Chemical mapping of a 207-nucleotide RNA with 2A3 and DMS. Source: RMDB library M2RFOK, as collected in RNAgym. For DMS the reverse transcriptase was MarathonRT. The reactions ran in a buffer of 150 mM KOAc, 10 mM MgCl2 and 150 mM bicine (pH 8.5), at 24 C. 2A3 is a SHAPE reagent: it acylates the 2'-hydroxyl of flexible nucleotides of all four kinds.
RNA sequence: GGGAACGACUCGAGUAGAGUCGAAAACGGUAUUGGUCAAGGCUAUACCGACAGCGCACCUUCAAAAGGGCGCUUAAUCCCCGGCCAAGCGCCGAAAUAUGAAUAGACACCGUUGGGCUGGUAGGGCAAAACAUGGCGAUCUUCGGAUCGCCAUGAACACUAUAAAGAUGUUCGCAUCUUUAUAGUGAAAAGAAACAACAACAACAAC
Reactivity to 2A3 in 0.01 (KOAc 150mM, MgCl2 10mM, bicine 150mM(pH8.5), 24C), signal-to-noise 4, nucleotides 027 to 156: c010g000g010u050a040u110u220g040g020u090c070a090a080g110g010c000u000a000u010a030c000c010g020a050c040a020g000c020g010c060a300c110c020u070u110c060a050a080a090a010g010g000g000c000g000c000u000u000a010a020u020c000c000c020c030g000g010c010c020a190a060g070c080g020c110c020g050a050a050a020u220a030u060g090a070a050u080a100g040a020c030a010c060c030g030u030u040g000g020g020c030u000g020g020u050a040g000g010g020c040a030a050a030a050c000a000u000g000g000c020g000a000u000c010u030u020c090g060g010a010u000c010g000c000c000a000u000g000a000a000
Reactivity to DMS in 0.01 (KOAc 150mM, MgCl2 10mM, bicine 150mM(pH8.5), 24C), signal-to-noise 3, nucleotides 027 to 156: c000g040g040u000a040u010u000g070g020u000c050a120a170g050g030c040u000a100u000a080c010c010g030a160c140a030g000c060g040c000a080c000c000u000u000c180a050a130a180a110g000g010g040c010g020c010u000u000a040a100u000c000c000c040c060g010g040c050c030a080a140g030c090g010c040c020g000a030a080a090u000a100u010g000a120a130u000a110g000a100c010a050c030c030g020u000u000g010g000g010c040u000g020g010u000a060g010g020g050c060a040a070a060a150c010a010u000g000g000c000g010a020u010c000u000u010c260g040g010a010u000c000g020c020c000a010u020g000a040a150